[RMDB]
RNA sequence: GGGAACGACUCGAGUAGAGUCGAAAAUUAGAAUUAACCUACAAUUAUGGUCAUGGCGACUACGACUUAGGAAAUGGCUAUGGUCAUAUUGCCCUUGGCUCUGAACAUUUUGAAGCAGACCAUACAAAACAUCGACAAGCAGGUUUUCCAGUUACCACGUAGCGUCAUACUUCGGUAUGACGCUACGAAAAGAAACAACAACAACAAC
Reactivity to 2A3 in 0.01 (KOAc 150mM, MgCl2 10mM, bicine 150mM(pH8.5), 24C), signal-to-noise 3, nucleotides 027 to 156: u050u040a030g060a030a040u130u080a080a050c010c000u040a060c040a040a030u170u030a000u030g010g000u020c010a000u020g050g000c080g060a060c020u010a060c040g200a050c120u120u180a110g110g000a140a160a080u110g120g000c000u000a010u010g000g000u010c000a010u030a020u030u050g010c030c000c000u020u040g030g000c050u010c030u020g050a130a040c040a150u220u130u150u230g070a050a000g040c050a010g010a010c000c010a010u050a140c050a040a100a060a010c010a080u140c060g080a030c040a060a020g080c050a090g020g030u040u030u020u000c050c000a030g030u090u080a030c010c080a040